[RMDB]
RNA sequence: GGGAACGACUCGAGUAGAGUCGAAAACGAGCUGAGACUCGGGAUAUUCCCGAGUGUAUCUCAUGCGGGGGUACUUUUGAGUUGGGCGGUAGCCGAGCCGAGUAGGCAGGCUUGGCUGGCCCUAGGCUCUAGGGAAGGGCUUCGGUCCUUCUCUAGAAAAAGAAACAACAACAACAAC
Reactivity to 2A3 in 0.01 (KOAc 150mM, MgCl2 10mM, bicine 150mM(pH8.5), 24C), signal-to-noise 9, nucleotides 027 to 126: c020g010a010g020c040u060g040a010g020a090c000u000c000g000g000g010a120u150a140u300u190c000c000c000g000a010g000u040g030u050a060u010c010u000c010a040u240g020c040g010g020g010g010g010u100a070c040u060u130u100u140g140a120g050u120u090g020g000g000c060g060g180u090a010g000c000c000g000a000g000c000c010g030a070g110u170a070g060g140c120a030g000g000c000u000u000g010g000c000u010g040g010c000c000c000u000a020g010g020c010
Reactivity to DMS in 0.01 (KOAc 150mM, MgCl2 10mM, bicine 150mM(pH8.5), 24C), signal-to-noise 9, nucleotides 027 to 126: c060g010a110g020c040u010g010a070g000a060c000u000c000g000g000g000a180u050a130u030u020c000c000c000g010a030g010u010g000u030a060u020c020u000c010a040u030g020c030g010g000g000g000g010u020a040c080u000u010u020u020g000a080g010u010u000g010g000g020c030g010g020u030a020g010c000c000g000a010g010c000c000g000a170g020u020a070g010g030c090a250g000g000c000u000u000g000g000c000u000g000g000c010c000c010u000a020g010g010c080